RNA sequence: GGGAACGACUCGAGUAGAGUCGAAAAAUUCAAUGUGUUCAGAAGAUCAUCCUACCAAGCAACACAUUCACUUUACUUGACAAUAGAGUGUUUUCCUUGGAAAUCCAGAGUGCCACUUUAAAAGAGAUCUUUAAACUUUUCUCACUACAGACUGCCAGCCUGAGGAAAAUUUCGAUUUUCCUCAGGCAAAAGAAACAACAACAACAAC
Reactivity to 2A3 in 0.01 (KOAc 150mM, MgCl2 10mM, bicine 150mM(pH8.5), 24C), signal-to-noise 2, nucleotides 027 to 156: a000u170u130c030a000a030u050g040u000g020u030u040c020a020g060a050a010g020a120u060c000a070u010c020c000u050a100c040c010a030a000g070c020a070a000c000a000c000a020u050u000c010a020c000u060u040u140a050c020u070u150g080a030c060a100a090u050a100g040a020g000u000g000u000u010u020u050c000c010u020u030g040g030a000a150a030u040c010c020a020g020a010g090u020g060c000c070a050c020u120u130u040a060a120a000a000g030a000g000a020u000c000u020u110u050a080a110a070c000u060u030u090u000c100u060c030a010c020u140a020c060a040g230a090c030u270g040c100c030a030